Conditions: 150 mM KOAc, 10 mM MgCl2 and 150 mM bicine (pH 8.5), 24 C. The record gives the reactivity of an RNA of 207 nucleotides to 2A3 and DMS. DMS adducts were read by reverse transcription with MarathonRT. For 2A3 the reverse transcriptase was SuperScript II with manganese.
[RMDB]
RNA sequence: GGGAACGACUCGAGUAGAGUCGAAAAGCUAGUCGGAGACGACUAGCAACGAUCAGUUCGCUGAUCGGAAGGUGCAUUCAAAUACGCUAGAAGCACCAAGCGACGACGCCUAGCGUAAAACUGAGAAAGCAGAUAACAAAAAUAAAAAGGCGUCGGGCCUCAAAAUAAAUUUCGAUUUAUUUUGAGGAAAAGAAACAACAACAACAAC
Reactivity to 2A3 in 0.01 (KOAc 150mM, MgCl2 10mM, bicine 150mM(pH8.5), 24C), signal-to-noise 2, nucleotides 027 to 156: g000c000u000a000g000u000c000g040g010a050g010a110c010g000a000c000u000a000g020c000a000a010c000g000a000u000c000a010g020u060u090c100g020c110u010g000a010u020c010g020g040a070a050g000g000u030g000c100a300u000u080c020a000a010a100u090a000c010g010c020u020a010g020a060a000g000c000a000c010c000a020a000g040c010g170a130c000g000a000c000g000c000c020u020a000g020c000g000u010a040a030a030a030c040u040g000a030g120a180a110a010g070c020a010g020a090u190a080a120c040a040a080a060a030a000u180a030a170a030a010a000g000g000c000g000u000c000g010g010g000
Reactivity to DMS in 0.01 (KOAc 150mM, MgCl2 10mM, bicine 150mM(pH8.5), 24C), signal-to-noise 1, nucleotides 027 to 156: g020c010u000a000g030u010c000g030g020a300g000a300c010g000a090c020u010a000g040c020a050a010c000g000a010u020c010a000g000u010u010c300g000c000u000g020a000u000c000g020g000a040a070g060g040u000g050c010a120u000u000c040a090a100a140u000a070c020g000c040u000a170g010a070a120g020c000a050c020c000a000a200g000c030g010a110c000g030a020c040g040c010c000u000a060g000c000g000u000a030a090a140a110c090u000g000a300g000a060a120a100g020c030a100g000a180u000a130a160c060a000a070a060a180a110u010a060a150a140a150a050g000g000c020g070u010c010g010g030g010